[RMDB]
RNA sequence: GGGAACGACUCGAGUAGAGUCGAAAAAUGGAGACAUCGUGAUGAGGAUACUUUCAAAGCGCCAGCUCAAGGAGCUGGUCCUCUACUCGCCGCAACACGUCGCGCGGCUGGAAAAGGCAGGCCAAUUCAGGCCUCUUUAAUUCGUUAAAGAGGCCUGAAAAGAAACAACAACAACAAC
Reactivity to 2A3 in 0.01 (KOAc 150mM, MgCl2 10mM, bicine 150mM(pH8.5), 24C), signal-to-noise 3, nucleotides 027 to 126: a000u110g030g000a040g050a010c020a050u090c040g010u070g040a100u110g000a030g060g000a030u070a210c050u000u160u200c070a100a090a010g030c040g000c010c000a000g000c000u010c090a160a170g120g000a000g040c000u000g000g000u000c000c000u000c000u010a030c020u000c080g000c010c010g010c020a100a050c070a020c100g100u080c000g020c050g000c010g030g000c000u020g010g000a020a040a080a050g030g000c000a010g030g070c000c000a010a030u020u000
Reactivity to DMS in 0.01 (KOAc 150mM, MgCl2 10mM, bicine 150mM(pH8.5), 24C), signal-to-noise 1, nucleotides 027 to 126: a120u000g000g000a170g000a150c040a020u040c030g030u050g000a090u070g000a140g000g000a140u000a000c160u000u000u020c090a030a120a120g010c070g010c040c000a000g000c050u040c110a160a130g000g000a010g000c000u040g020g000u010c090c040u010c050u000a110c000u000c090g000c000c040g020c010a030a090c060a060c080g000u070c160g040c130g010c090g000g000c000u020g000g000a030a020a080a030g000g000c030a110g130g000c000c020a250a230u000u000

The record gives the reactivity of an RNA of 177 nucleotides to 2A3 and DMS. The data come from the RNA Mapping Database (RMDB), library RFM100. DMS adducts were read by reverse transcription with MarathonRT. Values cover nucleotides 27 to 126. Conditions: 150 mM KOAc, 10 mM MgCl2 and 150 mM bicine (pH 8.5), 24 C.